RNA sequence: GGGAACGACUCGAGUAGAGUCGAAAAGUCCCCCGGUUCGCCGGGGGACAAAUAUUAAGACCGAAGCUUGGGCCACAGACACUUCCCUUGGGCGCAAAACAAAAACAUUGCUGUUCGCAGCAAUGAAGAAUACAAUGCUGUUCGCAGCAUUGUAUUCAAAAGAAACAACAACAACAAC
Reactivity to 2A3 in 0.01 (KOAc 150mM, MgCl2 10mM, bicine 150mM(pH8.5), 24C), signal-to-noise 1, nucleotides 027 to 126: g040u010c020c030c010c000c030g030g060u030u030c130g070c060c010g000g000g000g000g000a000c000a000a000a010u000a000u000u070a090a030g050a030c020c030g050a070a020g050c070u070u070g000g060g000c010c010a020c020a030g130a070c020a020c070u010u040c000c000c000u060u060g040g010g020c120g020c070a030a050a100a000c000a000a090a000a000a000c000a010u010u020g000c000u000g060u050u090c270g020c080a040g030c000a000a010u010g000a010a030
Reactivity to DMS in 0.01 (KOAc 150mM, MgCl2 10mM, bicine 150mM(pH8.5), 24C), signal-to-noise 1, nucleotides 027 to 126: g000u000c000c000c020c060c000g000g020u000u010c190g020c010c000g020g000g000g000g020a010c000a020a010a040u000a080u020u000a130a090g010a040c010c030g020a070a120g010c070u000u000g010g000g020c010c050a150c050a110g010a150c120a030c110u000u000c010c000c020u000u000g020g000g000c070g000c150a040a030a050a050c140a040a050a100a110a130c000a000u000u000g000c010u010g010u030u000c160g020c020a010g010c000a000a000u000g000a060a030